Structure probing data (DMS and 2A3) for a 177-nucleotide construct.
The reactions ran in a buffer of 150 mM KOAc, 10 mM MgCl2 and 150 mM bicine (pH 8.5), at 24 C.
It was measured as part of the RMDB library OK1LIB.
RNA sequence: GGGAACGACUCGAGUAGAGUCGAAAAAUAGGAGAGCGCGCUCACUAGGCGACCAGCGACUUGGCCGAGUGCCAAGAUAUUUCGUCAUAAUAUAGAAAGCCAUUGCCAGCCAUUGCUCUCGAGAGACACCAAUUGACCCGUUCGCGGGUCAAUUGGUAAAAGAAACAACAACAACAAC
Reactivity to DMS in 0.01 (KOAc 150mM, MgCl2 10mM, bicine 150mM(pH8.5), 24C), signal-to-noise 1, nucleotides 027 to 126: a130u240a150g000g040a060g000a010g000c000g000c060g070c060u000c020a080c110u000a160g000g000c000g000a010c080c250a040g000c060g000a170c000u000u000g000g000c000c000g010a210g000u000g060c010c030a060a000g000a270u060a110u000u010u000c070g000u000c140a170u010a110a010u030a040u030a010g000a210a130a200g000c010c100a040u000u000g000c050c230a080g010c000c230a300u000u000g000c080u000c000u000c000g000a160g000a230g000a210c250
Reactivity to 2A3 in 0.01 (KOAc 150mM, MgCl2 10mM, bicine 150mM(pH8.5), 24C), signal-to-noise 2, nucleotides 027 to 126: a000u160a080g220g000a010g000a000g050c040g010c000g030c080u020c070a080c040u020a110g000g000c020g000a000c000c000a030g060c030g130a110c000u000u020g010g000c000c060g300a150g070u300g000c040c000a000a000g000a000u200a150u040u010u030c020g010u000c040a070u040a270a120u110a030u000a180g090a080a080a000g020c050c050a060u070u000g020c020c030a000g000c000c060a010u080u150g040c030u000c000u010c040g010a010g000a000g000a020c020